[RMDB]
RNA sequence: GGGAACGACUCGAGUAGAGUCGAAAACCAUAAUUGCCAAUGAUGAGCAAUUCGCUAUUGCCGCCUAAAAACGGUUAGCCGGGGCUGCUAGAGCCUUGUUACCAAAGAUAGCCGGCAGGGACUUCGGAAAAGAGGCCAAAGUUCGCUUUGGCCUCAAUCAUAGUACAUUCUUCGGAAUGUACUAUGAAAAAGAAACAACAACAACAAC
Reactivity to 2A3 in 0.01 (KOAc 150mM, MgCl2 10mM, bicine 150mM(pH8.5), 24C), signal-to-noise 1, nucleotides 027 to 156: c010c000a030u160a050a040u030u000g000c010c020a070a120u230g090a130u120g030a160g060c010a020a000u060u040c030g010c100u050a080u090u180g000c010c010g000c000c020u070a050a050a030a010a010c020g000g030u070u020a010g010c040c000g020g000g020g040c020u040g020c050u090a050g040a010g150c000c000u010u010g060u030u120a080c060c030a060a040a010g020a080u040a020g040c020c010g000g030c020a030g060g020g040a050c010u070u040c180g010g010a010a170a040a040g010a010g010g010c000c000a000a000a000g010u030u110c180g050c060u020u020u000g000g000c000c000u010c010a000a010
Reactivity to DMS in 0.01 (KOAc 150mM, MgCl2 10mM, bicine 150mM(pH8.5), 24C), signal-to-noise 2, nucleotides 027 to 156: c040c010a140u000a060a070u000u000g030c000c020a130a170u000g010a220u000g020a140g000c000a030a040u000u000c090g050c040u010a060u010u010g010c010c000g000c040c060u020a070a050a080a130a120c050g000g000u000u000a050g040c060c060g030g000g030g030c020u000g000c060u010a110g000a120g050c010c010u000u000g000u000u000a180c030c040a110a060a140g000a250u000a060g020c030c060g020g010c050a090g000g040g000a110c070u010u000c040g000g000a070a100a120a180g000a010g000g030c000c000a000a010a040g050u010u000c300g010c020u010u000u000g000g000c020c010u000c000a010a060
This 207-nucleotide RNA was probed chemically with 2A3 and DMS. 2A3 adducts were read by reverse transcription with SuperScript II with manganese. The reactions ran in a buffer of 150 mM KOAc, 10 mM MgCl2 and 150 mM bicine (pH 8.5), at 24 C. Source: RMDB library M2RFPK, as collected in RNAgym.